[RMDB]
RNA sequence: GGGAACGACUCGAGUAGAGUCGAAAAUUCUAAAGUCCGUCAGUCAUCUCUUCCUGGAACAGAUAACUACUAAGGGCCAACGAUGGUGCCCAGCUCUAGGCUGGACCCUGGUGGCUUAGAUACCUGCUCUUGUGGAGCUUAUGUUCUAGUGAAGGGACAUUUACCCUCCAUUCGUGGAGGGUAAAUGAAAAGAAACAACAACAACAAC
Reactivity to DMS in 0.01 (KOAc 150mM, MgCl2 10mM, bicine 150mM(pH8.5), 24C), signal-to-noise 1, nucleotides 027 to 156: u010u000c040u000a070a190a190g010u000c020c080g010u000c060a110g020u000c030a120u000c030u030c000u000u000c020c030u000g000g010a050a040c030a090g000a240u000a040a070c020u010a120c060u010a090a110g030g000g030c020c060a070a090c050g050a120u040g010g000u030g030c010c010c010a060g030c040u000c070u010a120g110g040c030u000g000g010a030c010c000c000u000g000g020u010g020g040c010u010u010a080g020a260u000a030c040c010u000g050c010u000c030u000u000g020u000g000g020a080g000c020u000u020a070u000g030u000u000c020u000a070g040u020g020a010a030g000g020g050a040
Reactivity to 2A3 in 0.01 (KOAc 150mM, MgCl2 10mM, bicine 150mM(pH8.5), 24C), signal-to-noise 2, nucleotides 027 to 156: u100u040c040u200a180a020a020g110u020c030c050g080u080c100a070g080u080c020a080u010c030u020c000u000u000c000c000u050g030g000a000a000c000a000g000a030u130a130a160c110u120a030c000u030a080a020g070g000g000c010c010a110a040c070g110a100u190g020g000u190g030c020c000c000a000g000c030u040c060u140a140g250g000c000u000g050g000a020c000c000c020u000g040g010u010g010g050c000u010u000a030g010a000u110a070c030c060u010g000c010u010c050u070u230g110u220g160g020a010g000c050u060u080a050u020g000u000u000c000u000a020g020u050g200a020a000g000g000g000a000